[RMDB]
RNA sequence: GGGAACGACUCGAGUAGAGUCGAAAAGAUAUGGACGCUGACCAUGGGCAACAGCAGACUUCGGAAACGAAGUCUGACAUGCCUGGGUCUGGCGUCCUAAGUCAAAACGUCCAGUUCGCUGGACGAAGGACUGUUAUUACUUCGGUAAUAACAGUCCAAAAGAAACAACAACAACAAC
Reactivity to DMS in 0.01 (KOAc 150mM, MgCl2 10mM, bicine 150mM(pH8.5), 24C), signal-to-noise 4, nucleotides 027 to 126: g000a050u000a300u010g000g010a010c000g020c010u000g010a010c000c010a150u000g010g010g010c000a030a100c280a210g000c010a010g000a010c000u000u000c000g000g000a130a100a230c010g020a020a010g000u000c000u000g000a040c090a230u000g000c000c000u000g010g000g000u000c010u000g030g010c000g000u000c000c000u000a010a050g010u030c030a090a080a190a160c020g010u000c010c000a010g010u000u010c240g000c010u000g010g000a000c000g010a050a060
Reactivity to 2A3 in 0.01 (KOAc 150mM, MgCl2 10mM, bicine 150mM(pH8.5), 24C), signal-to-noise 4, nucleotides 027 to 126: g020a020u070a050u150g000g000a000c010g000c040u020g000a000c030c090a300u170g000g000g010c060a190a100c070a250g100c000a020g010a000c000u000u000c010g020g030a060a090a050c010g010a010a010g000u000c000u000g010a010c000a030u090g000c010c010u010g030g000g000u010c050u040g030g010c000g000u000c010c000u000a010a000g010u010c010a030a010a030a130c020g010u000c000c000a000g020u080u100c300g030c120u000g000g000a010c010g010a030a010
Structure probing data (DMS and 2A3) for a 177-nucleotide construct. The data come from the RNA Mapping Database (RMDB), library TTRDES. For 2A3, 14,923 sequencing reads were counted. The reactions ran in a buffer of 150 mM KOAc, 10 mM MgCl2 and 150 mM bicine (pH 8.5), at 24 C. DMS adducts were read by reverse transcription with MarathonRT.